[RMDB]
RNA sequence: GGGAACGACUCGAGUAGAGUCGAAAAGCGGGGCUUAAAACGCGGGUAGCGCGCACGCCCGGCGAAGAAGUUCGCAUACGCGGUGUGCUGGUGCCGAAGUGUCUGCUGCAACGGCACGCUCGACACCUAGAACAUACCGUAUUCGUACGGUAUGUAAUACCCAUUAACCUUUCGAGGUUAAUGGGUAAAAAGAAACAACAACAACAAC
Reactivity to 2A3 in 0.01 (KOAc 150mM, MgCl2 10mM, bicine 150mM(pH8.5), 24C), signal-to-noise 3, nucleotides 027 to 156: g010c050g000g030g030g020c010u060u120a020a020a070a050c080g010c020g020g020g050u080a040g060c060g000c000g010c080a000c000g010c000c000c000g020g010c000g000a020a010g030a060a020g130u030u030c010g000c020a020u080a270c060g020c140g010g000u010g000u000g020c040u060g010g010u010g000c010c000g010a050a030g010u030g040u080c070u110g070c040u080g040c070a080a000c040g010g010c000a000c020g060c050u030c020g020a000c010a010c010c010u010a050g030a120a000c000a000u000a000c000c000g000u000a010u010u070c130g020u020a000c000g000g000u010a000u000g000u000a010a000
Reactivity to DMS in 0.01 (KOAc 150mM, MgCl2 10mM, bicine 150mM(pH8.5), 24C), signal-to-noise 2, nucleotides 027 to 156: g000c030g000g020g040g000c040u000u030a030a070a080a060c060g020c020g010g020g020u010a060g010c050g040c040g040c010a060c080g010c000c000c020g010g020c000g020a040a140g020a130a170g010u010u010c010g060c010a150u010a230c020g030c030g080g020u030g020u000g020c000u000g000g000u000g000c000c080g020a050a100g010u000g000u010c050u000g040c050u000g020c130a130a120c120g000g010c000a030c000g010c070u000c000g000a050c020a030c030c000u000a090g000a150a050c000a000u000a000c000c000g000u000a030u000u000c210g010u000a010c000g020g000u000a000u000g000u000a130a190